An RNA of 177 nucleotides, treated with 2A3 and DMS and read out base by base. For 2A3, 6,475 sequencing reads were counted. The data come from the RNA Mapping Database (RMDB), library OK2TST.
[RMDB]
RNA sequence: GGGAACGACUCGAGUAGAGUCGAAAACAGCAUCGGGGGUUGCCGGUGACCGUCGUGGUGAGCACCACGCUUAAAGAGCUGGAAGCCGCCACCGGCAAGGGGGUAACCGGUGGUGGUUCGCGGGUGCGGAUAGAGACAUUUUCGAAUGUCUCUAUCCAAAAGAAACAACAACAACAAC
Reactivity to 2A3 in 0.01 (KOAc 150mM, MgCl2 10mM, bicine 150mM(pH8.5), 24C), signal-to-noise 2, nucleotides 027 to 126: c030a010g100c010a050u060c040g020g010g000g060g030u060u110g070c030c010g040g010u070g040a050c020c020g130u090c030g000u030g010g040u080g070a060g020c020a030c000c010a110c040g010c010u060u070a150a090a020g120a030g030c050u080g060g000a090a000g010c000c000g010c000c000a010c000c000g000g000c010a040a070g050g010g000g000g000u010a040a010c000c010g000g010u000g000g010u000g000g000u020u020c000g010c020g020g000g010u020g020c010
Reactivity to DMS in 0.01 (KOAc 150mM, MgCl2 10mM, bicine 150mM(pH8.5), 24C), signal-to-noise 5, nucleotides 027 to 126: c070a090g010c050a050u000c040g010g010g010g000g010u000u000g010c040c030g010g010u000g010a090c040c050g000u010c060g030u010g000g020u000g000a130g030c070a090c010c010a060c060g010c060u000u010a070a090a110g000a130g010c030u010g010g010a150a100g010c010c010g020c000c000a010c000c000g010g010c060a090a090g010g010g010g000g000u010a110a300c010c000g010g010u000g000g020u000g000g000u000u000c050g010c060g000g000g010u000g000c080